[RMDB]
RNA sequence: GGGAACGACUCGAGUAGAGUCGAAAAGAUAUGGACCCUCCAGGACAUGCUAUUCAUUCGGAAACGAAUGAUUAGCAACAGCCUGAGAGGGUCCUAAGUCAAAGCAGGUAUCUUCGGAUACCUGCAAUCUAUUUUAUGGGUUCGCCCAUAAAAUAGAAAAAGAAACAACAACAACAAC
Reactivity to 2A3 in 0.01 (KOAc 150mM, MgCl2 10mM, bicine 150mM(pH8.5), 24C), signal-to-noise 3, nucleotides 027 to 126: g010a010u000a020u060g010g010a000c000c010c010u000c010c010a010g010g020a050c110a220u300g000c010u000a010u010u010c000a000u010u000c010g010g000a020a010a010c000g000a020a010u010g000a000u000u000a000g020c000a010a010c020a010g020c000c000u060g020a200g000a000g070g000g000u000c000c000u000a010a000g000u020c010a030a020a070g010c000a000g000g000u020a000u000c020u060u230c300g130g000a000u000a010c010c000u000g000c000a000a000
Reactivity to DMS in 0.01 (KOAc 150mM, MgCl2 10mM, bicine 150mM(pH8.5), 24C), signal-to-noise 4, nucleotides 027 to 126: g000a020u000a100u010g000g000a010c000c000c000u010c000c000a010g010g010a040c120a200u010g010c010u000a000u000u000c000a010u000u000c010g020g000a030a030a050c000g010a020a000u000g000a010u000u000a010g010c000a080a040c240a130g020c000c000u000g000a190g000a010g010g010g020u000c000c000u000a000a070g000u000c010a140a130a180g010c010a010g010g010u000a010u000c000u000u020c240g010g000a010u000a000c000c000u000g000c010a010a020

An RNA of 177 nucleotides, treated with 2A3 and DMS and read out base by base. Values cover nucleotides 27 to 126. For 2A3 the reverse transcriptase was SuperScript II with manganese. Conditions: 150 mM KOAc, 10 mM MgCl2 and 150 mM bicine (pH 8.5), 24 C. DMS (dimethyl sulfate) methylates the pairing face of unpaired adenines and cytosines.